[RMDB]
RNA sequence: GGGAACGACUCGAGUAGAGUCGAAAACUAAUUUUGACAUGUUAGCAUGUUUAGGACUAACCUUAUUACCACAACUCAAACGCCCAAUCCAGUAUUAGCGAUAAAUUCAGUGGCUUUUAAGAUGCUGGAAAACAGUUAUUUUCGAAUAACUGUUUUCAAAAGAAACAACAACAACAAC
Reactivity to 2A3 in 0.01 (KOAc 150mM, MgCl2 10mM, bicine 150mM(pH8.5), 24C), signal-to-noise 9, nucleotides 027 to 126: c010u040a060a160u090u120u090u220g040a010c020a030u060g020u120u140a080g070c010a020u030g050u070u090u110a070g030g020a030c030u050a050a090c020c000u060u050a050u050u070a080c020c020a040c020a100a090c030u070c120a120a100a070c040g020c020c040c040a020a040u030c010c010a020g020u070a070u140u060a030g010c010g050a050u050a130a120a050u120u060c040a030g030u020g110g000c070u060u070u020u020a050a030g040a050u090g020c030u050g040
Reactivity to DMS in 0.01 (KOAc 150mM, MgCl2 10mM, bicine 150mM(pH8.5), 24C), signal-to-noise 9, nucleotides 027 to 126: c030u020a070a090u010u010u000u000g010a060c050a030u000g000u010u010a100g020c040a030u000g010u000u000u010a080g000g010a110c080u010a080a080c050c020u000u010a050u000u010a060c040c030a060c060a060a080c110u010c090a060a080a130c150g010c030c020c050a060a090u000c040c050a070g010u000a030u000u000a080g010c030g000a070u010a040a050a090u010u010c110a080g020u000g010g010c060u000u000u010u000a070a110g000a060u000g010c070u000g000